RNA sequence: GGGAACGACUCGAGUAGAGUCGAAAACCUACAUUUACCACUCCGCAUUCAUUGAGUGUGGAAGUUGUGGUAAUGAUUCCUGGCUUACAGGGAAUGCUAUCCAAGGGUUUGCCUGUGGAUGUGGGGCCAUGAUGACCCUGUUCGCAGGGUCAUCAUGAAAAGAAACAACAACAACAAC
Reactivity to 2A3 in 0.01 (KOAc 150mM, MgCl2 10mM, bicine 150mM(pH8.5), 24C), signal-to-noise 2, nucleotides 027 to 126: c010c000u000a020c030a030u040u090u030a010c000c000a000c000u000c000c020g000c010a000u000u000c030a070u080u300g020a000g010u000g010u010g000g010a020a050g170u130u110g000u010g000g000u000a000a020u040g010a020u060u060c010c010u040g050g020c080u090u140a050c040a040g030g000g050a030a090u100g070c030u050a020u050c020c000a000a020g090g020g050u030u130u200g180c010c020u120g020u030g060g020a020u020g050u060g040g030g000g000c020
Reactivity to DMS in 0.01 (KOAc 150mM, MgCl2 10mM, bicine 150mM(pH8.5), 24C), signal-to-noise 2, nucleotides 027 to 126: c000c000u000a140c060a110u000u000u000a000c010c010a020c010u000c010c000g010c010a010u010u010c000a250u000u030g020a010g020u000g020u000g000g000a070a130g000u000u010g010u000g020g000u000a000a010u000g000a210u010u000c010c000u000g010g030c210u010u000a060c050a040g000g000g010a060a060u020g020c050u000a070u000c010c080a120a100g000g000g010u000u010u010g010c000c000u000g000u010g000g010a020u000g000u000g010g000g000g030c210